[RMDB]
RNA sequence: GGGAACGACUCGAGUAGAGUCGAAAAGCAUCGCUCUGGUGCUGACCUUGCAGCGUCCAAUCGGCCAGAUCACCGCCGCCAUGCGCCGCAUUGCCGAUGGCAUGCUGGAGACCGUGAUCUCGGGCGAGACGAUCCUCGUGUUCGCACGAGGAUCGUCAAAAGAAACAACAACAACAAC
Reactivity to DMS in 0.01 (KOAc 150mM, MgCl2 10mM, bicine 150mM(pH8.5), 24C), signal-to-noise 1, nucleotides 027 to 126: g000c020a010u000c050g060c120u040c200u050g030g020u000g000c010u000g000a200c000c000u000u020g010c010a000g000c000g060u060c000c130a080a150u000c010g000g000c000c030a000g030a000u030c000a020c000c140g010c040c050g000c080c040a100u040g000c020g000c070c060g000c010a010u060u000g000c080c110g010a090u010g050g000c000a020u000g060c030u030g040g010a000g000a180c140c180g000u000g020a000u000c030u000c110g020g010g000c010g000a030
Reactivity to 2A3 in 0.01 (KOAc 150mM, MgCl2 10mM, bicine 150mM(pH8.5), 24C), signal-to-noise 2, nucleotides 027 to 126: g000c000a020u010c040g090c070u100c140u180g020g020u010g070c070u040g020a020c000c000u020u170g050c010a060g010c000g060u060c000c000a040a050u060c000g050g070c010c020a040g000a050u030c010a010c010c000g060c030c000g010c010c040a100u180g000c000g000c000c020g000c110a140u000u160g020c010c000g210a150u130g050g000c000a010u050g000c050u110g010g000a010g050a050c010c040g000u000g070a050u000c000u000c030g070g000g040c000g000a010
Source: RMDB library OK1LIB, as collected in RNAgym. Structure probing data (DMS and 2A3) for a 177-nucleotide construct. DMS adducts were read by reverse transcription with MarathonRT. For DMS, 1,485 sequencing reads were counted. The RNA was probed in 150 mM KOAc, 10 mM MgCl2 and 150 mM bicine (pH 8.5) at 24 C.